[RMDB]
RNA sequence: GGGAACGACUCGAGUAGAGUCGAAAAACCUUUGUGUUAAUCUGUGAUGCAUGGGACAUGCUUGGAGGGAUACCCAUUGGGUAUCCCACAAGCAACAGCCCAUGUGCAUGGUUAACACUCUGGUAAAGGUGAAUUCAUGGUUCGCCAUGAAUUCACCGCCCCAAACAUUGUUCGCAAUGUUUGGGGCAAAAGAAACAACAACAACAAC
Reactivity to 2A3 in 0.01 (KOAc 150mM, MgCl2 10mM, bicine 150mM(pH8.5), 24C), signal-to-noise 4, nucleotides 027 to 156: a000c000c000u000u010u000g010u000g000u000u010a010a030u050c060u070g060u040g110a300u100g080c010a000u000g000g000g030a080c040a120u050g010c010u020u030g050g050a300g080g020g000a000u010a000c010c010c110a300u210u300g040g000g000u000a000u030c000c000c000a000c000a010a000g000c000a000a010c020a010g040c000c010c010a000u010g000u000g000c000a010u010g000g000u000u000a000a000c000a000c000u000c010u000g040g010u090a190a130a060g000g000u000g000a010a000u000u000c000a010u000g000g070u040u080c210g040c090c000a000u000g000a000a000u010u000c000a000c000c010

This 207-nucleotide RNA was probed chemically with 2A3. 2A3 adducts were read by reverse transcription with SuperScript II with manganese.